[RMDB]
RNA sequence: GGGAACGACUCGAGUAGAGUCGAAAAAUACAGGAGAAUACCUUAAUACCGUGCUCUGAUCUCAUUACUCUGCAAUGCCGGGGGUACACUACGCGUAUGUGUAUCACGCGCAGGUGCGGCAGGCCGCGAUCGUAUACCGAUUCGUCGGUAUACGAUCAAAAGAAACAACAACAACAAC
Reactivity to 2A3 in 0.01 (KOAc 150mM, MgCl2 10mM, bicine 150mM(pH8.5), 24C), signal-to-noise 9, nucleotides 027 to 126: a000u220a030c090a050g030g060a070g080a150a120u170a200c000c020u080u080a090a030u060a150c010c020g020u050g020c010u010c020u070g110a130u050c020u000c020a060u040u120a110c050u040c020u070g030c020a040a100u070g020c010c010g080g010g050g000g020u020a010c020a010c010u110a060c070g100c050g200u200a070u220g050u010g020u030a020u080c010a000c020g060c020g000c020a020g010g080u050g010c000g010g020c030a020g050g000c010c020g060c050
Reactivity to DMS in 0.01 (KOAc 150mM, MgCl2 10mM, bicine 150mM(pH8.5), 24C), signal-to-noise 5, nucleotides 027 to 126: a040u010a090c160a090g000g000a070g000a110a060u050a040c010c030u000u000a060a110u010a100c090c120g000u000g000c030u000c010u000g000a080u000c020u000c050a090u020u030a090c060u040c020u010g000c040a080a070u000g000c050c010g000g000g010g010g030u010a010c020a010c030u010a160c110g000c170g030u020a050u040g000u010g020u020a020u000c040a030c030g000c140g000c020a020g010g020u000g000c040g000g000c070a070g000g010c060c040g010c160